[RMDB]
RNA sequence: GGGAACGACUCGAGUAGAGUCGAAAACUCCUAUAGUAGCAGGACCCAUGGGAGCUACAUAUACAGCAUUUAAUCCAAGAACAGUAGCCAUUUGGAUGGAAAAAGCUAGAGAGGGUAUACAUAGUGAAUGUAAUAACAGGUUCGCCUGUUAUUACAUAAAAGAAACAACAACAACAAC
Reactivity to 2A3 in 0.01 (KOAc 150mM, MgCl2 10mM, bicine 150mM(pH8.5), 24C), signal-to-noise 3, nucleotides 027 to 126: c020u020c010c000u070a070u060a190g030u030a010g020c050a040g040g090a060c030c010c030a040u060g070g000g010a090g010c010u000a000c010a010u070a020u020a030c040a000g000c030a030u070u050u150a100a030u020c010c010a020a020g050a150a000c030a120g090u080a040g050c020c010a030u040u020u030g050g000a030u030g010g010a140a090a010a020a000g060c050u100a010g020a000g000a010g060g050g010u040a070u030a050c060a020u150a080g100u080g140a150
Reactivity to DMS in 0.01 (KOAc 150mM, MgCl2 10mM, bicine 150mM(pH8.5), 24C), signal-to-noise 7, nucleotides 027 to 126: c150u000c010c010u010a090u000a100g010u000a040g030c030a080g020g010a140c060c020c030a100u000g000g010g000a130g020c020u000a030c040a090u000a100u010a100c100a050g010c030a090u000u000u000a110a060u000c020c010a030a050g010a100a090c090a080g020u000a060g010c080c080a080u000u000u000g010g000a040u000g000g000a050a060a060a130a120g010c030u000a040g000a110g010a080g010g010g020u000a040u010a060c120a050u010a080g020u000g000a110
An RNA of 177 nucleotides, treated with 2A3 and DMS and read out base by base. Conditions: 150 mM KOAc, 10 mM MgCl2 and 150 mM bicine (pH 8.5), 24 C. For 2A3, 3,593 sequencing reads were counted. Values cover nucleotides 27 to 126. For 2A3 the reverse transcriptase was SuperScript II with manganese. DMS adducts were read by reverse transcription with MarathonRT.